[RMDB]
RNA sequence: GGGAACGACUCGAGUAGAGUCGAAAAGCCAGAACAGGCCAAAUAUAAUGUCGCUGGUACCGGCUGUGUCUGUCAUGAUCUCAACCGGAUUCAGCCCUGUCUGCUGUUCCAGAAGGCCUUCCAGCACCUACGCUCACAAUUUCGAUUGUGAGCGUAGAAAAGAAACAACAACAACAAC
Reactivity to 2A3 in 0.01 (KOAc 150mM, MgCl2 10mM, bicine 150mM(pH8.5), 24C), signal-to-noise 1, nucleotides 027 to 126: g010c030c010a000g090a110a050c050a030g040g000c040c010a040a190a000u300a030u080a110a200u160g050u160c100g000c030u010g000g000u090a140c000c030g000g000c030u010g000u020g000u030c020u030g290u060c040a120u300g040a110u040c050u030c110a010a050c010c040g050g000a050u120u090c000a000g000c000c000c000u070g000u030c050u030g010c010u000g000u070u040c030c010a010g110a080a000g040g030c000c000u030u020c000c010a040g030c020a030c000
Reactivity to DMS in 0.01 (KOAc 150mM, MgCl2 10mM, bicine 150mM(pH8.5), 24C), signal-to-noise 3, nucleotides 027 to 126: g020c080c050a050g010a060a060c090a050g000g030c150c100a110a080a090u010a110u010a080a090u010g010u000c130g030c020u000g000g000u000a150c060c040g010g000c010u000g020u000g010u000c010u000g020u010c250a070u020g000a040u020c110u000c030a020a050c090c010g020g000a200u000u000c020a040g020c010c050c090u000g010u020c080u010g010c050u000g010u010u000c000c010a130g030a120a080g000g010c010c060u010u010c060c020a060g020c110a060c150